[RMDB]
RNA sequence: GGGAACGACUCGAGUAGAGUCGAAAAUAUUCCGGUGUGGGAUACUUGGUAAUAUGUAACGCUAAUUGCAUAAGAUUGUAGGACGGAAUUUACAGUCUUGGUUUUUAUAAACCUGAAACUAAGGAAGAAUAGUAAGAGCGGUUCGCCGCUCUUACAAUCAGUGUAUGGUGUUCGCACCAUACACUGAAAAAGAAACAACAACAACAAC
Reactivity to 2A3 in 0.01 (KOAc 150mM, MgCl2 10mM, bicine 150mM(pH8.5), 24C), signal-to-noise 3, nucleotides 027 to 156: u100a040u040u040c020c010g040g070u180g010u100g030g130g000a050u030a110c010u010u050g020g010u010a010a040u020a030u040g030u030a080a020c120g020c200u120a170a060u180u060g010c020a020u010a030a000g000a020u020u010g000u020a010g050g060a010c070g020g030a030a010u070u040u010a020c010a000g010u000c020u020u010g020g020u020u010u010u000u070a260u150a060a030a010c000c000u000g040a030a010a030c020u020a010a000g060g030a050a080g060a120a120u100a090g010u010a000a000g000a000g000c000g000g040u000u050c220g020c040c000g000c000u000c010u000u000a000c000a000a010
Reactivity to DMS in 0.01 (KOAc 150mM, MgCl2 10mM, bicine 150mM(pH8.5), 24C), signal-to-noise 2, nucleotides 027 to 156: u000a110u010u010c000c030g040g030u000g070u010g010g000g020a100u000a040c010u000u030g010g010u000a030a060u000a020u000g030u030a050a070c100g020c160u000a030a210u010u000g020c000a030u000a020a020g010a030u000u010g020u000a040g020g050a200c060g030g030a080a300u000u000u000a030c010a020g010u010c010u000u030g000g000u000u000u000u000u000a140u010a110a040a020c000c000u000g010a050a030a050c020u000a010a020g000g010a080a120g000a080a080u000a190g020u000a000a000g000a010g040c000g000g000u000u020c290g040c040c000g030c000u000c000u010u000a020c000a080a120

An RNA of 207 nucleotides, treated with 2A3 and DMS and read out base by base. Values cover nucleotides 27 to 156. For 2A3 the reverse transcriptase was SuperScript II with manganese. It was measured as part of the RMDB library M2RFPK. The 2A3 profile rests on 1,420 reads.